Annotation:
The record gives the reactivity of an RNA of 207 nucleotides to 2A3 and DMS. Reactivities are given for positions 27 through 156. The DMS profile rests on 2,813 reads. Values are in units of 0.01, from 0 to 300, in steps of 10. For DMS the reverse transcriptase was MarathonRT.
RNA sequence: GGGAACGACUCGAGUAGAGUCGAAAAUAAGCCAAAGGGAUGUCCCGACCGGAGGCCGACAAUCCAGGGAACCGGAUGUCAUCACGUUGUUGCAGUUCCAGAUGGCAUCUUAAAUCCGAUCUGCAAAAAAAGUCUUACACCUUCGGGUGUAAGACAAGCUAAAUGAUACGUUCGCGUAUCAUUUAGCAAAAGAAACAACAACAACAAC
Reactivity to 2A3 in 0.01 (KOAc 150mM, MgCl2 10mM, bicine 150mM(pH8.5), 24C), signal-to-noise 1, nucleotides 027 to 156: u090a030a010g000c010c000a000a000a010g000g000g000a020u030g010u030c010c010c010g010a000c000c000g020g000a020g010g010c000c000g020a040c040a170a090u150c160c130a050g000g020g010a010a020c010c020g000g000a000u000g020u010c000a010u010c010a010c210g180u230u110g070u040u050g020c000a020g000u050u040c020c010a010g000a010u010g000g010c000a000u010c000u040u050a070a070a040u130c130c010g020a030u000c000u000g000c000a000a000a000a000a040a040a080g000u000c010u000u000a000c000a000c000c000u040u070c190g170g000g000u000g010u000a000a000g000a000c000a000a000
Reactivity to DMS in 0.01 (KOAc 150mM, MgCl2 10mM, bicine 150mM(pH8.5), 24C), signal-to-noise 2, nucleotides 027 to 156: u000a110a140g020c020c000a030a300a190g000g000g000a050u000g000u010c000c000c010g010a150c030c000g000g010a300g010g020c020c030g000a120c090a060a110u000c050c010a130g020g030g000a090a050c020c050g020g010a000u000g000u000c000a000u000c030a260c150g030u000u000g000u000u000g000c000a030g010u000u000c020c040a180g000a030u000g000g000c020a030u000c020u000u010a090a070a120u030c070c020g000a060u000c030u010g000c010a000a000a060a070a090a070a140g000u000c000u000u000a000c000a020c000c000u010u020c270g060g030g060u000g010u000a000a000g000a000c000a000a080